[RMDB]
Overview:
Chemical mapping of a 207-nucleotide RNA with 2A3. Values cover nucleotides 27 to 156. The data come from the RNA Mapping Database (RMDB), library ARCHII. The reactions ran in a buffer of 150 mM KOAc, 10 mM MgCl2 and 150 mM bicine (pH 8.5), at 24 C. For 2A3 the reverse transcriptase was SuperScript II with manganese.
RNA sequence: GGGAACGACUCGAGUAGAGUCGAAAAUGCUGGAGUGUGGCCGAGUUAAUGCACUCGGGUAAGGUAACAACUCCCAGUUCGAUAGGAUUGACCUGCAGCCAAGCCUUUGGUUACGCCAAGGGUACUGUUCACAGACUAAAUGAUGACGGGUUGUAAAGUUCCAUGUUUACUUCGGUAAACAUGGAACAAAAGAAACAACAACAACAAC
Reactivity to 2A3 in 0.01 (KOAc 150mM, MgCl2 10mM, bicine 150mM(pH8.5), 24C), signal-to-noise 2, nucleotides 027 to 156: u110g020c010u010g080g000a040g010u040g000u010g100g090c080c000g000a000g000u000u030a200a090u180g080c070a000c000u000c000g020g000g000u210a170a030g110g000u070a030a050c010a070a020c010u060c080c020c000a000g000u120u130c040g010a060u040a140g070g000a070u000u100g040a030c000c020u010g000c010a000g090c040c010a050a040g000c000c000u020u020u020g130g000u070u300a100c210g040c010c000a000a000g000g000g070u040a040c050u030g030u000u080c010a050c040a060g020a050c150u200a130a070a160u110g070a030u010g040a060c060g050g090g000u010u000g060u040a090a120a000